[RMDB]
RNA sequence: GGGAACGACUCGAGUAGAGUCGAAAACAAUUCUUACCUGUGUAAUGCUUAAGACAGGCCUUAGCACCGGUACAAAAUAUUCCGCUCUUGAGAUGUAUGGAGGUAAGCUUGAGAUUUUUGAAAUAUAAGCGUGACGGUAUUUCGAUACCGUCACGCUAAAAGAAACAACAACAACAAC
Reactivity to 2A3 in 0.01 (KOAc 150mM, MgCl2 10mM, bicine 150mM(pH8.5), 24C), signal-to-noise 1, nucleotides 027 to 126: c160a000a190u270u020c030u000u000a000c000c000u020g000u000g000u200a000a000u170g000c020u070u000a030a010g070a000c120a030g000g220c000c000u000u070a090g110c000a000c010c010g010g000u000a000c040a130a250a000a000u220a140u070u050c010c000g040c100u000c000u130u040g010a010g000a050u040g070u100a000u160g100g130a040g000g090u000a000a000g000c000u100u000g080a000g070a220u000u030u030u150u300g000a000a000a000u200a030u000a000

The record gives the reactivity of an RNA of 177 nucleotides to 2A3. Reactivities are rounded to 0.1 and cut off at 0 and 3. 2A3 adducts were read by reverse transcription with SuperScript II with manganese. The RNA was probed in 150 mM KOAc, 10 mM MgCl2 and 150 mM bicine (pH 8.5) at 24 C.